[RMDB]
RNA sequence: GGGAACGACUCGAGUAGAGUCGAAAACAGGUUGAUAUUCCUGUACCACCUCUUUACCGUUUGAGCAAUGGGGGGACGCAGGAGGAUAGGGUAAGCGCGCUGUUGGAUAUGCGCGUCCAAGCAGUUAACCACAUGUUCGAUUCGUCGAACAUGUGGUAAAAGAAACAACAACAACAAC
Reactivity to DMS in 0.01 (KOAc 150mM, MgCl2 10mM, bicine 150mM(pH8.5), 24C), signal-to-noise 2, nucleotides 027 to 126: c040a080g000g010u000u000g010a120u010a150u010u000c020c010u000g020u010a120c050c080a210c030c010u010c010u010u000u010a090c050c010g010u010u020u020g010a130g030c050a030a050u010g000g000g010g010g000g000a110c100g000c040a010g000g010a040g000g000a090u010a060g010g010g020u010a080a200g000c000g010c020g030c000u000g010u000u000g010g010a150u000a090u010g000c010g010c000g000u000c030c020a080a060g010c120a080g010u010u000a120
Reactivity to 2A3 in 0.01 (KOAc 150mM, MgCl2 10mM, bicine 150mM(pH8.5), 24C), signal-to-noise 1, nucleotides 027 to 126: c010a020g050g050u060u060g130a160u020a060u200u020c020c000u000g000u040a060c050c020a290c000c020u040c050u060u060u120a060c030c010g110u050u070u240g140a090g000c010a080a030u120g000g020g010g000g000g010a010c020g000c020a010g000g040a020g050g010a020u060a060g070g000g000u050a070a000g000c000g000c020g000c020u030g030u220u000g100g060a030u060a000u220g010c000g000c000g000u000c000c000a040a010g040c020a010g010u040u110a020